[RMDB]
RNA sequence: GGGAACGACUCGAGUAGAGUCGAAAACUGCCUACAACUUGAUCUUAUUUGAUCGGGUAGUGGCCCCAGCCUGCCCGGCAGACCCGAGAUGAAAAGCUCUCCUCCUGCGAAGCCCCUCUUCGGAGCAUCAAGUAUUAAUCUUCGGAUUAAUACUUGAAAAAGAAACAACAACAACAAC
Reactivity to DMS in 0.01 (KOAc 150mM, MgCl2 10mM, bicine 150mM(pH8.5), 24C), signal-to-noise 3, nucleotides 027 to 126: c070u010g020c060c020u020a080c080a080a060c050u010u010g020a020u000c010u000u020a190u020u010u000g000a020u010c020g010g010g000u000a060g030u000g000g010c020c030c040c040a120g010c060c020u010g010c020c040c030g000g000c050a070g010a110c030c010c050g010a090g020a080u010g010a050a090a110a110g000c040u000c030u000c030c010u010c030c020u000g010c050g010a100a120g000c030c020c010c030u000c050u000u000c070g010g000a070g020c190a090
Reactivity to 2A3 in 0.01 (KOAc 150mM, MgCl2 10mM, bicine 150mM(pH8.5), 24C), signal-to-noise 1, nucleotides 027 to 126: c030u060g010c010c000u110a060c010a140a040c040u030u060g010a010u000c010u090u290a290u300u300u110g000a000u000c000g030g020g000u050a070g030u020g020g000c000c000c000c000a030g010c000c020u000g000c010c040c000g030g000c040a030g060a060c000c000c030g030a010g020a040u200g070a090a080a030a030g000c010u020c010u040c050c020u010c000c020u010g020c020g030a050a030g040c020c000c080c020u000c000u050u050c030g120g000a000g010c010a020